This 177-nucleotide RNA was probed chemically with 2A3 and DMS. The reactions ran in a buffer of 150 mM KOAc, 10 mM MgCl2 and 150 mM bicine (pH 8.5), at 24 C.

RNA sequence: GGGAACGACUCGAGUAGAGUCGAAAACUCGGUUAAUUCGUUAACCGAGACUUCUUAAACAUCUUUUCAACACUUAGAUGGUAAAUAUUCAAAGAUGUUCGAAUGCGAUAAACUUCGGUUUAUCGAACUGUUUUACAUCUUUCGAGAUGUAAAACAGAAAAGAAACAACAACAACAAC
Reactivity to 2A3 in 0.01 (KOAc 150mM, MgCl2 10mM, bicine 150mM(pH8.5), 24C), signal-to-noise 7, nucleotides 027 to 126: c000u000c000g000g000u020u020a040a030u080u050c110g020u020u020a010a010c000c000g000a000g010a000c020u060u030c000u020u140a080a060a000c000a020u000c010u040u050u090u110c090a090a050c030a030c110u150u200a070g050a260u170g030g020u070a050a140a070u210a090u080u070c040a020a020a000g010a020u010g010u020u030c040g100a180a060u160g070c020g000a000u000a010a010a000c010u030u040c130g070g000u000u000u000a010u010c000g000a020a010
Reactivity to DMS in 0.01 (KOAc 150mM, MgCl2 10mM, bicine 150mM(pH8.5), 24C), signal-to-noise 5, nucleotides 027 to 126: c000u000c000g010g000u000u000a010a020u000u010c150g020u010u000a000a000c000c010g000a010g010a030c080u000u000c020u000u000a110a050a040c020a010u000c010u010u000u000u000c110a070a070c100a030c070u000u000a100g010a120u000g010g000u010a040a060a090u010a090u000u010c130a020a010a020g000a040u000g010u000u000c160g000a060a070u010g000c010g010a010u000a000a000a000c010u000u000c170g020g000u000u000u000a010u000c000g000a040a140

DMS adducts were read by reverse transcription with MarathonRT. Source: RMDB library M2PK50, as collected in RNAgym. 2A3 adducts were read by reverse transcription with SuperScript II with manganese.